[RMDB]
RNA sequence: GGGAACGACUCGAGUAGAGUCGAAAAAGGCUAGGUCUGGAGGCUGGUGUAAGGCGAUGCGGGUGAAGGCAGGAGGCUGAUGGAGAGAGAGACUGGGGGGAAGAAAAGCCGAAAUGGAUUCACGGUGUAGAGAACCCUUUUUCGAAAGGGUUCUCUAAAAAGAAACAACAACAACAAC
Reactivity to 2A3 in 0.01 (KOAc 150mM, MgCl2 10mM, bicine 150mM(pH8.5), 24C), signal-to-noise 1, nucleotides 027 to 126: a000g060g020c090u050a060g020g020u090c000u020g000g030a030g120g020c030u030g000g080u060g040u080a110a100g000g000c000g010a000u100g000c000g060g040g000u060g000a010a060g030g000c000a020g000g060a060g020g060c000u000g010a080u080g020g030a030g000a000g000a000g060a000g050a040c070u080g020g000g000g030g000g000a040a010g030a000a110a000a000g000c000c000g050a040a050a070u160g020g030a010u000u070c000a000c040g040g000u020g020
Reactivity to DMS in 0.01 (KOAc 150mM, MgCl2 10mM, bicine 150mM(pH8.5), 24C), signal-to-noise 2, nucleotides 027 to 126: a090g010g000c010u030a090g000g010u000c010u030g000g060a120g010g000c040u000g010g030u000g000u000a120a100g000g020c090g010a110u020g000c050g010g010g000u010g000a070a080g030g040c030a060g020g000a120g000g030c030u020g010a060u010g000g000a050g010a140g000a130g030a090g000a090c060u020g000g000g030g000g000g010a070a060g000a070a060a060a140g010c000c020g050a120a080a110u000g000g000a130u030u020c070a070c050g040g000u000g030